Chemical mapping of a 177-nucleotide RNA with DMS and 2A3. The RNA was probed in 150 mM KOAc, 10 mM MgCl2 and 150 mM bicine (pH 8.5) at 24 C. For DMS the reverse transcriptase was MarathonRT. Values cover nucleotides 27 to 126. Reactivities are rounded to 0.1 and cut off at 0 and 3. For 2A3 the reverse transcriptase was SuperScript II with manganese. It was measured as part of the RMDB library M2PK50.
RNA sequence: GGGAACGACUCGAGUAGAGUCGAAAAGAAGGCACUUUCGAGUGCCUUCAUGGGGAGCUCAGGUCUCCCUCCCUUGCUAACUCCCUAAGGGAGGAGACCUAAUUAGGUGCACUUUCGAGUGCACCAAGACAUACAAUCGUUUCGACGAUUGUAUGUCAAAAGAAACAACAACAACAAC
Reactivity to DMS in 0.01 (KOAc 150mM, MgCl2 10mM, bicine 150mM(pH8.5), 24C), signal-to-noise 5, nucleotides 027 to 126: g010a030a000g000g000c010a000c000u000u010u010c170g010a020g020u000g020c000c000u000u000c010a040u010g000g010g000g010a220g010c140u000c100a010g000g010u000c010u000c090c020c030u000c000c000c000u000u000g010c170u010a080a250c140u000c010c030c030u000a040a030g000g000g000a050g000g000a020g000a010c000c000u000a050a060u000u010a080g010g010u000g000c000a020c000u000u000u010c200g000a020g010u000g000c000a010c000c010a030a050
Reactivity to 2A3 in 0.01 (KOAc 150mM, MgCl2 10mM, bicine 150mM(pH8.5), 24C), signal-to-noise 6, nucleotides 027 to 126: g010a000a000g010g010c030a000c040u050u080u200c300g090a000g000u000g000c000c000u000u010c000a000u020g000g000g010g010a050g050c060u070c210a010g040g000u020c000u040c030c040c010u010c000c000c000u000u010g040c040u180a170a130c040u090c020c000c030u040a010a010g010g000g000a010g000g000a000g000a000c000c000u010a030a070u120u150a050g000g000u000g000c000a000c000u040u080u120c250g100a010g000u000g000c000a000c000c000a000a010